[RMDB]
Annotation:
Chemical mapping of a 177-nucleotide RNA with DMS and 2A3.

RNA sequence: GGGAACGACUCGAGUAGAGUCGAAAAGCCAAUGCUCGCCGAUCUCGUUGUCCACCAGAUCGAGGCGGUGGAUCAUUACCAGGCCAAGUCCGUUGAGCAGUGCCACCACCGGGAGCAACAGCGGGUCAUCCUGUGGCUAAUUCGUUAGCCACAGGAUAAAAGAAACAACAACAACAAC
Reactivity to DMS in 0.01 (KOAc 150mM, MgCl2 10mM, bicine 150mM(pH8.5), 24C), signal-to-noise 4, nucleotides 027 to 126: g010c020c060a120a140u020g000c020u000c010g020c140c010g010a040u010c030u000c190g020u000u020g010u040c070c120a090c060c110a040g000a040u010c050g000a110g000g000c070g000g000u010g000g000a060u000c070a080u010u010a100c090c060a130g000g000c010c060a140a110g010u000c040c020g020u000u020g020a120g000c040a030g010u000g010c010c070a080c020c020a040c050c040g000g010g000a060g020c030a060a100c190a070g000c070g020g000g000u020c130
Reactivity to 2A3 in 0.01 (KOAc 150mM, MgCl2 10mM, bicine 150mM(pH8.5), 24C), signal-to-noise 7, nucleotides 027 to 126: g030c000c010a040a070u070g000c000u020c040g050c010c000g080a200u060c000u000c020g040u040u120g100u090c040c020a050c030c010a060g030a120u070c020g020a030g020g040c030g000g010u040g050g020a030u080c010a020u030u110a080c030c050a050g060g000c030c030a090a040g080u070c010c020g040u060u080g020a040g030c040a020g040u060g100c020c010a040c000c010a020c030c030g080g030g000a030g010c010a030a050c000a020g030c010g010g040g040u060c020
For DMS, 5,217 sequencing reads were counted. For 2A3 the reverse transcriptase was SuperScript II with manganese. Reactivities are given for positions 27 through 126. For 2A3, 6,691 sequencing reads were counted. Conditions: 150 mM KOAc, 10 mM MgCl2 and 150 mM bicine (pH 8.5), 24 C.